Conditions: 150 mM KOAc, 10 mM MgCl2 and 150 mM bicine (pH 8.5), 24 C. An RNA of 177 nucleotides, treated with DMS and read out base by base. Reactivities are given for positions 27 through 126. It was measured as part of the RMDB library OK2TST. For DMS, 1,170 sequencing reads were counted.
RNA sequence: GGGAACGACUCGAGUAGAGUCGAAAACAACCAAUGGUACUGUAUUAUAUAAGGGUAAAAUUGUGGCUGUACCUUCAGAUGAUGAGCCUGAUUUUAUUGUUUGUGGUAAGGGCUAUAAGCUUGAUUGACCAUCAAGUGUCUUCGGACACUUGAUGGUAAAAGAAACAACAACAACAAC
Reactivity to DMS in 0.01 (KOAc 150mM, MgCl2 10mM, bicine 150mM(pH8.5), 24C), signal-to-noise 1, nucleotides 027 to 126: c130a130a180c070c010a140a060u000g010g010u000a080c030u010g000u000a030u000u000a080u000a080u030a090a060g000g000g010u000a010a020a030a040u000u010g030u000g020g030c000u000g000u000a040c040c040u000u010c130a110g010a080u010g030a090u000g020a030g000c030c010u020g000a020u000u000u000u000a010u040u000g010u000u000u000g000u000g020g010u020a040a070g000g000g000c030u000a020u020a100a130g030c090u020u000g000a050u000u000g000